[RMDB]
RNA sequence: GGGAACGACUCGAGUAGAGUCGAAAAGCUCUCCUCGGCUUUUCGCUUCUUUUGGGGAGUCGCCGCGGGCUUCUGCUCCUUGCCUCUCACUAUUCCUAGGACAUUUCCCAGGAAACCAUGCUGCUCCUCAAGCUUUCUCUUCUUCUUUGUCACCUUCACUAUGAGAAGUGUUCGCACUUCUCAUAGUAAAAGAAACAACAACAACAAC
Reactivity to 2A3 in 0.01 (KOAc 150mM, MgCl2 10mM, bicine 150mM(pH8.5), 24C), signal-to-noise 2, nucleotides 027 to 156: g000c020u030c030u030c130c060u100c110g040g010c010u040u030u080u070c010g000c020u130u120c000u070u250u080u120g040g030g010g000a020g020u050c030g000c040c030g040c130g010g030g090c040u190u150c120u300g070c030u100c020c010u030u190g030c000c000u010c020u050c030a050c100u100a070u090u060c000c000u030a060g000g000a010c070a250u150u200u070c020c010c020a020g060g040a070a050a050c040c000a050u130g010c030u020g030c000u020c000c010u030c040a020a010g030c020u020u180u050c020u040c000u050u040c010u100u020c000u070u100u120g050u080c020a050c050c000u060u120c030
Notes: Chemical mapping of a 207-nucleotide RNA with 2A3. Conditions: 150 mM KOAc, 10 mM MgCl2 and 150 mM bicine (pH 8.5), 24 C. It was measured as part of the RMDB library VIROID.